Structure probing data (2A3 and DMS) for a 177-nucleotide construct. The DMS profile rests on 3,262 reads. The RNA was probed in 150 mM KOAc, 10 mM MgCl2 and 150 mM bicine (pH 8.5) at 24 C.
RNA sequence: GGGAACGACUCGAGUAGAGUCGAAAAAAAAAAUAGAUCGUUCUAUUAACGAUCUCGCGCGGGUCGUCGGUGGUCGGCGAGCCCACGGACGAACUUACUCGCGCGUAAGUUAAUAAUUCGCCAAAAAACAUGGGUAAGUAUUCGUACUUACCCAUGUAAAAGAAACAACAACAACAAC
Reactivity to 2A3 in 0.01 (KOAc 150mM, MgCl2 10mM, bicine 150mM(pH8.5), 24C), signal-to-noise 2, nucleotides 027 to 126: a000a000a000a000a000a010u120a040g000a000u000c030g000u050u000c090u150a300u300u230a030a000c000g000a000u000c010u000c010g000c000g000c020g000g010g000u050c010g000u010c070g150g010u010g010g000u060c090g000g020c040g020a080g100c000c000c020a000c020g090g000a000c000g020a040a020c050u130u120a030c010u060c000g000c000g000c000g020u000a000a030g000u030u080a020a050u050a110a050u110u020c030g070c010c030a040a070a030a000a000
Reactivity to DMS in 0.01 (KOAc 150mM, MgCl2 10mM, bicine 150mM(pH8.5), 24C), signal-to-noise 3, nucleotides 027 to 126: a000a020a050a090a070a070u000a020g000a010u000c000g010u000u010c270u020a110u010u000a040a010c000g000a010u000c000u000c020g000c010g020c010g010g000g030u000c010g020u010c010g010g040u000g010g010u000c040g020g020c010g020a030g010c300c000c010a000c000g010g000a020c000g000a130a100c230u010u010a130c000u000c020g000c010g000c010g010u000a010a040g000u010u010a040a060u010a030a070u010u000c010g020c000c020a010a040a050a070a050